Chemical mapping of a 177-nucleotide RNA with DMS and 2A3.
It was measured as part of the RMDB library OK2TRN.

[RMDB]
RNA sequence: GGGAACGACUCGAGUAGAGUCGAAAACUUUAGAACAAGAAAACAUACAAUCUUUAUUAGCUAUCGGCCAUACGCGUUGGGCAACGCAUGGCGUGCCUACAGUAAGUAAUGCUCAUCCCCACGUAGAUGUAAAUACAAUGUUCGCAUUGUAUUUACAAAAAGAAACAACAACAACAAC
Reactivity to DMS in 0.01 (KOAc 150mM, MgCl2 10mM, bicine 150mM(pH8.5), 24C), signal-to-noise 9, nucleotides 027 to 126: c040u000u000u000a090g020a120a100c130a060a080g000a080a060a080a100c110a070u010a090c110a080a060u000c040u000u000u010a080u010u000a090g010c050u000a070u000c080g010g000c010c020a050u000a040c110g010c040g010u000u000g020g010g030c050a080a040c030g010c010a060u000g010g020c020g030u000g010c040c030u000a060c110a080g000u000a040a070g010u000a060a050u010g000c010u000c040a150u000c010c000c000c080a080c240g020u000a070g010a180
Reactivity to 2A3 in 0.01 (KOAc 150mM, MgCl2 10mM, bicine 150mM(pH8.5), 24C), signal-to-noise 9, nucleotides 027 to 126: c000u110u120u140a090g050a110a020c040a070a040g080a050a120a040a020c030a040u220a050c040a070a120u030c030u060u230u100a140u090u110a080g020c020u030a030u140c030g060g000c020c020a030u060a080c070g010c000g060u050u060g060g040g000c060a070a020c010g010c030a070u070g080g000c020g010u040g020c010c010u060a070c030a020g040u110a130a010g030u030a080a060u070g000c010u010c030a060u050c010c000c000c000a050c040g030u030a050g020a190

DMS adducts were read by reverse transcription with MarathonRT. Reactivities are given for positions 27 through 126. For 2A3, 14,892 sequencing reads were counted. The DMS profile rests on 14,896 reads.